[RMDB]
RNA sequence: GGGAACGACUCGAGUAGAGUCGAAAAAUGAGCGAAACCAAAGUAAUGAGUGUAGAGGAAAUCUUCGAUGAGUUCGACACGGACGGUUCGGCCACCUGGUCGGAUCGAGAGGUGCGAACCUUUCUCAAUGGAUAGUCGGAUUCGUCCGACUAUCCAUAAAAGAAACAACAACAACAAC
Reactivity to 2A3 in 0.01 (KOAc 150mM, MgCl2 10mM, bicine 150mM(pH8.5), 24C), signal-to-noise 1, nucleotides 027 to 126: a000u140g010a030g020c050g040a110a020a050c010c010a120a060a030g080u090a090a130u120g000a000g060u070g030u070a010g030a030g110g020a130a120a060u020c050u090u030c100g030a070u060g050a070g010u010u000c010g050a050c050a010c000g070g040a000c000g010g010u010u010c000g000g020c000c000a140c070c170u080g000g000u000c000g000g000a000u010c000g000a000g000a010g000g000u000g020c000g010a000a000c000c000u000u090u000c000u020c050a040
Reactivity to DMS in 0.01 (KOAc 150mM, MgCl2 10mM, bicine 150mM(pH8.5), 24C), signal-to-noise 3, nucleotides 027 to 126: a060u000g000a050g010c050g000a040a120a200c030c030a060a150a070g010u020a060a120u000g000a080g010u000g000u000a020g040a100g020g010a060a070a100u010c060u010u000c090g010a080u000g010a130g020u010u000c000g000a130c030a030c030g000g030a300c050g000g000u000u000c000g010g000c010c000a190c300c220u010g040g030u000c010g010g000a000u000c000g010a040g010a300g010g010u000g000c000g010a030a000c010c050u000u010u020c000u000c030a190